Chemical mapping of a 177-nucleotide RNA with DMS. Reactivities are given for positions 27 through 126. The reactions ran in a buffer of 150 mM KOAc, 10 mM MgCl2 and 150 mM bicine (pH 8.5), at 24 C.

[RMDB]
RNA sequence: GGGAACGACUCGAGUAGAGUCGAAAAGAUAUGGAUGUAAGGGAGCUCGUAAGAUACGUUGAAAAUCGGUUUCGGAAACGAAACCGAUUGGAGUAUCAAGAAGAGCGAAGAACUUACAUCCUAAGUCCUAAUUGUCAUGCUUCGGCAUGACAAUUAGAAAAGAAACAACAACAACAAC
Reactivity to DMS in 0.01 (KOAc 150mM, MgCl2 10mM, bicine 150mM(pH8.5), 24C), signal-to-noise 1, nucleotides 027 to 126: g000a010u010a190u010g000g000a030u000g000u000a000a010g000g000g010a180g050c030u010c010g020u010a250a240g030a040u010a000c000g020u010u000g000a130a070a000a010u010c000g010g000u010u010u000c000g000g030a080a060a150c010g000a000a010a000c000c010g000a000u010u000g010g010a060g030u010a000u000c010a060a110g000a180a230g010a030g030c000g000a040a150g020a190a160c000u010u010a010c000a030u000c000c000u000a010a140g000u000c040